An RNA of 177 nucleotides, treated with 2A3 and DMS and read out base by base. As a SHAPE reagent, 2A3 marks flexible, mostly unpaired nucleotides at the ribose 2'-OH. Reactivities are rounded to 0.1 and cut off at 0 and 3. High DMS reactivity at an A or C suggests that its Watson-Crick edge is free. Source: RMDB libraries RFM100 and RFMREP, as collected in RNAgym. The reactions ran in a buffer of 150 mM KOAc, 10 mM MgCl2 and 150 mM bicine (pH 8.5), at 24 C. DMS adducts were read by reverse transcription with MarathonRT.
RNA sequence: GGGAACGACUCGAGUAGAGUCGAAAAGUGAAACGGUGCGGUAAGAGCGCACCAGCGAGGUAGGUGACUACCUCGGCUAGGUAAACCCCACUGGGAGCAAGGCAUUAGGGCGUACCGUCGUUUCAGACUUAAACCUCACUUUCGAGUGAGGUUUAAGAAAAGAAACAACAACAACAAC
Reactivity to 2A3 in 0.01 (KOAc 150mM, MgCl2 10mM, bicine 150mM(pH8.5), 24C), signal-to-noise 3, nucleotides 027 to 126: g170u120g030a030a000a060c020g000g030u030g000c010g010g030u060a070a020g010a020g060c020g010c020a010c010c010a000g010c000g000a000g000g000u010a010g020g100u120g050a130c000u000a000c000c010u000c000g000g010c010u000a030g040g020u080a080a090a060c010c010c000c000a090c060u110g010g040g030a040g010c040a080a020g090g000c020a020u100u170a060g030g010g040c010g050u070a050c020c050g060u090c020g000u030u000u010c010a010g020a000
Reactivity to DMS in 0.01 (KOAc 150mM, MgCl2 10mM, bicine 150mM(pH8.5), 24C), signal-to-noise 3, nucleotides 027 to 126: g020u030g000a110a030a110c080g010g020u010g000c010g020g000u020a070a090g000a150g000c020g000c120a040c000c030a020g010c000g000a000g000g000u010a000g000g010u060g000a260c010u000a000c000c000u010c010g000g020c030u000a080g000g000u030a040a100a070c030c010c000c050a110c120u000g010g000g010a080g020c080a090a080g020g000c040a060u000u000a090g010g020g000c070g000u000a010c080c020g000u000c060g010u000u000u000c030a040g000a300